Record summary: An RNA of 207 nucleotides, treated with 2A3 and DMS and read out base by base. For DMS, 7,131 sequencing reads were counted. For 2A3 the reverse transcriptase was SuperScript II with manganese.

RNA sequence: GGGAACGACUCGAGUAGAGUCGAAAAUCUGUGGAAUUGAGAGUGUGGUGUGGACAUAUUGACAUGGGGUAGGAUUUGUGGUAAGGUUCCGACACGUUCAGCAUUUCCACUCCCCAUGUUAAGCAGAUGAAAAUGGUGGGGUAGAAAGAGAAGGAAACAGUAGGAUAGGUUUCGACCUAUCCUACUGAAAAGAAACAACAACAACAAC
Reactivity to 2A3 in 0.01 (KOAc 150mM, MgCl2 10mM, bicine 150mM(pH8.5), 24C), signal-to-noise 6, nucleotides 027 to 156: u040c030u020g030u050g040g060a070a100u100u090g030a090g020a020g060u070g000u030g050g000u040g010u030g030g010a010c020a050u150a070u020u100g000a000c000a000u010g000g000g010g010u030a080g010g010a020u020u010u030g030u020g040g040u150a090a080g060g030u070u070c080c060g050a050c050a020c100g070u100u080c020a010g000c010a010u000u010u000c010c020a080c140u100c010c000c010c000a000u000g000u000u000a010a000g000c010a010g030a120u080g060a050a030a020a060u070g020g000u030g010g010g000g020u040a020g070a020a060a000g060a010g020a050a070g060g010a080a080a000
Reactivity to DMS in 0.01 (KOAc 150mM, MgCl2 10mM, bicine 150mM(pH8.5), 24C), signal-to-noise 3, nucleotides 027 to 156: u000c070u030g040u020g010g010a060a140u000u000g020a100g000a080g000u000g000u000g020g010u010g020u010g020g000a060c070a060u010a090u000u000g000a040c020a050u000g020g010g040g020u000a200g020g000a050u000u000u020g010u000g030g000u010a040a040g020g010u000u000c030c150g020a180c100a020c060g010u000u000c040a300g010c020a070u000u000u000c010c020a100c110u000c000c000c000c000a030u000g020u000u000a010a080g010c090a100g010a130u010g000a050a040a090a080u000g020g020u010g030g000g000g000u000a060g010a050a050a080g010a090g000a070a050g020g000a090a060a160